[RMDB]
RNA sequence: GGGAACGACUCGAGUAGAGUCGAAAAGUCUCGAUACCGCUGACGGUGCUGUUGAUCUUCACGCUCAAUAUUCUGCUGGCCCAGUUCGGCGCGGCAGACAUCUCCGGUUCCGGCGCGGCGAUCGGCGCAGUAUUUUACCGUUCGCGGUAAAAUACUGAAAAGAAACAACAACAACAAC
Reactivity to 2A3 in 0.01 (KOAc 150mM, MgCl2 10mM, bicine 150mM(pH8.5), 24C), signal-to-noise 9, nucleotides 027 to 126: g050u030c040u040c090g020a030u030a080c020c010g020c080u120g060a050c010g000g040u030g000c020u030g010u070u070g020a060u040c060u140u140c170a070c130g130c050u090c070a080a060u080a150u250u030c010u010g010c000u040g070g040c000c010c040a110g110u170u220c090g030g000c160g000c000g120g010c010a010g010a010c010a030u030c050u010c020c010g040g000u050u020c010c000g010g010c020g010c000g030g010c040g050a030u010c010g010g010c070g000
Reactivity to DMS in 0.01 (KOAc 150mM, MgCl2 10mM, bicine 150mM(pH8.5), 24C), signal-to-noise 6, nucleotides 027 to 126: g000u010c020u010c010g000a070u010a120c030c010g010c020u020g030a060c040g000g000u000g000c040u000g010u010u000g000a040u000c050u020u020c080a070c090g010c070u020c070a090a090u040a090u010u010c010u000g000c030u010g010g010c020c010c140a180g020u050u040c300g000g000c020g010c010g010g000c020a020g010a030c300a060u000c080u020c090c030g010g010u000u000c040c030g010g010c040g010c020g000g010c080g000a020u000c020g000g000c110g010
The record gives the reactivity of an RNA of 177 nucleotides to 2A3 and DMS. The 2A3 profile rests on 13,033 reads. Reactivities are given for positions 27 through 126. For DMS the reverse transcriptase was MarathonRT.